[RMDB]
RNA sequence: GGGAACGACUCGAGUAGAGUCGAAAAUCUGCUUAAGAAAAAGUGGUAUUUGUAGAGGAUCUGUCAUGUACAUCUUAGCAAAUACUUAUCAUGGUAUAUUAUUCGUCUUUUGUCAUGACCACUUCUGUAUAUAGAAUAGUAGACCUUCUGAACCACAUCGCUAGUCAUUAUUCGUAAUGACUAGCGAAAAAGAAACAACAACAACAAC
Reactivity to DMS in 0.01 (KOAc 150mM, MgCl2 10mM, bicine 150mM(pH8.5), 24C), signal-to-noise 1, nucleotides 027 to 156: u000c050u000g000c000u000u010a060a230g000a060a120a070a090a040g030u000g020g020u000a050u000u000u010g020u000a100g010a090g050g010a010u010c040u000g030u000c060a090u020g000u020a050c020a050u000c120u000u000a150g000c060a040a060a030u010a020c080u010u000a060u000c060a140u010g000g000u000a020u000a010u000u000a060u000u000c040g000u010c020u000u020u000u020g050u000c000a050u000g030a100c020c070a110c060u000u010c030u000g000u000a200u010a160u000a110g000a050a040u000a100g010u000a070g000a050c000c020u000u000c040u000g000a070a120c000c000a020c020a190
Reactivity to 2A3 in 0.01 (KOAc 150mM, MgCl2 10mM, bicine 150mM(pH8.5), 24C), signal-to-noise 2, nucleotides 027 to 156: u010c010u060g050c040u140u170a140a070g060a090a130a020a030a020g010u050g030g000u060a130u090u080u050g050u090a040g000a020g080g040a170u020c060u070g020u010c020a050u100g040u050a010c000a010u030c040u090u140a010g000c010a000a060a030u010a010c000u060u100a210u160c060a060u170g030g040u030a030u020a020u160u130a110u120u130c050g050u120c090u020u080u060u050g030u020c020a010u010g010a010c010c010a040c050u060u040c020u030g070u020a070u030a030u030a270g030a040a020u020a100g050u010a010g030a030c010c000u050u020c020u050g050a030a030c020c000a010c020a070